[RMDB]
RNA sequence: GGGAACGACUCGAGUAGAGUCGAAAAGAGGAUACGAAAAGCUUCGUGCUUUCGAUAGCUUCGUAGCGGCGGCUACGUGCCCUAGGGGAGCCGCCUCCCCUGCUAUCGGCGCGAGGGGAGUAUCCGAAUCAUGCCCUACGUUCGCGUAGGGCAUGAUAAAAGAAACAACAACAACAAC
Reactivity to DMS in 0.01 (KOAc 150mM, MgCl2 10mM, bicine 150mM(pH8.5), 24C), signal-to-noise 1, nucleotides 027 to 126: g000a200g000g000a030u000a030c000g000a130a090a150a190g010c010u000u000c030g030u000g000c050u000u010u020c080g000a010u000a010g000c000u010u010c020g040u000a010g010c040g040g000c220g000g010c010u000a050c050g010u000g010c070c030c060u000a070g020g000g000g000a030g000c060c130g050c070c010u000c010c000c000c000u000g020c010u030a020u020c020g030g000c000g000c000g000a030g000g000g020g010a220g000u000a010u000c000c000g000a100
Reactivity to 2A3 in 0.01 (KOAc 150mM, MgCl2 10mM, bicine 150mM(pH8.5), 24C), signal-to-noise 1, nucleotides 027 to 126: g180a020g020g010a000u040a020c030g100a010a010a180a180g070c020u030u010c000g020u020g010c020u120u240u170c040g000a010u020a010g000c000u080u040c020g020u030a020g000c050g150g010c050g020g000c030u060a040c020g020u060g110c050c010c010u010a020g000g020g000g020a020g150c100c010g120c040c050u030c010c000c000c000u020g010c000u010a000u040c000g010g000c010g020c000g000a000g010g000g010g000a010g000u000a000u000c000c000g030a010
Structure probing data (DMS and 2A3) for a 177-nucleotide construct. The RNA was probed in 150 mM KOAc, 10 mM MgCl2 and 150 mM bicine (pH 8.5) at 24 C. For 2A3 the reverse transcriptase was SuperScript II with manganese.